Chemical mapping of a 177-nucleotide RNA with DMS and 2A3.
[RMDB]
RNA sequence: GGGAACGACUCGAGUAGAGUCGAAAAGAUAUGGAGACUGUUGACCUCCAACAGCUUAGUCGGAAACGACUAAGACAUGGAGGACAGGUCUCCUAAGUCAAAAGAUACCAAGUUCGCUUGGUAUCAACCUUGGGUUAAGCUUCGGCUUAACCCAAGGAAAAGAAACAACAACAACAAC
Reactivity to DMS in 0.01 (KOAc 150mM, MgCl2 10mM, bicine 150mM(pH8.5), 24C), signal-to-noise 1, nucleotides 027 to 126: g000a070u010a300u000g040g010a020g010a010c000u000g040u000u000g000a130c000c010u010c000c000a050a070c300a140g000c000u000u000a000g000u000c000g020g010a160a060a290c000g030a040c000u000a000a000g000a000c040a280u000g000g010a040g030g000a180c000a060g000g020u000c000u000c000c000u000a010a120g010u000c010a050a040a130a120g000a000u010a000c000c000a020a070g020u000u040c300g040c000u000u000g000g000u000a000u000c000a030a110
Reactivity to 2A3 in 0.01 (KOAc 150mM, MgCl2 10mM, bicine 150mM(pH8.5), 24C), signal-to-noise 1, nucleotides 027 to 126: g010a010u060a050u220g000g000a000g040a000c020u040g300u300u230g210a130c000c020u000c000c020a040a090c080a060g120c000u010u030a000g000u020c020g010g010a040a080a090c000g010a010c020u020a000a000g020a020c020a060u070g000g000a000g000g000a000c030a000g020g020u000c010u020c000c000u000a040a010g010u020c000a130a040a070a000g000a000u020a000c010c000a000a010g050u060u170c300g060c150u000u000g000g080u010a020u000c000a020a010

The RNA was probed in 150 mM KOAc, 10 mM MgCl2 and 150 mM bicine (pH 8.5) at 24 C. The data come from the RNA Mapping Database (RMDB), library TTRDES. For 2A3 the reverse transcriptase was SuperScript II with manganese.